[RMDB]
RNA sequence: GGGAACGACUCGAGUAGAGUCGAAAAGAGACAGGGUUCGCCCUGUCUCAAAGAACGCGAAGAAAACCGAAAUAAAACCGUAUGGUACGCGACCAACAACAAAAACUAAGACCUUCGGGUCUUAGAACUACCUAUGAAUGUUCGCAUUCAUAGGUAGAAAAGAAACAACAACAACAAC
Reactivity to DMS in 0.01 (KOAc 150mM, MgCl2 10mM, bicine 150mM(pH8.5), 24C), signal-to-noise 3, nucleotides 027 to 126: g010a020g000a010c000a000g000g000g050u000u020c300g020c010c000c000u010g010u010c000u000c010a020a040a100g000a110a120c070g010c020g020a090a130g000a090a030a100a100c080c050g000a070a060a100u010a080a080a060a100c070c060g000u020a060u000g010g020u010a030c030g010c010g000a250c070c030a030a030c060a020a030c070a040a050a070a090a200c010u020a010a010g010a020c000c000u000u020c210g020g000g000u000c000u000u000a000g000a080a160
Reactivity to 2A3 in 0.01 (KOAc 150mM, MgCl2 10mM, bicine 150mM(pH8.5), 24C), signal-to-noise 5, nucleotides 027 to 126: g010a000g000a000c010a000g030g000g020u070u080c100g080c010c000c000u000g000u000c000u000c000a000a000a020g010a050a020c000g000c020g030a070a080g090a110a160a020a040c030c040g070a100a110a010u240a040a130a040a030c060c040g060u100a110u150g020g000u020a020c020g000c010g010a020c000c020a010a040c010a020a000c010a020a130a020a030a010c000u000a000a000g000a000c000c000u050u150c300g090g000g000u000c000u000u000a000g000a010a010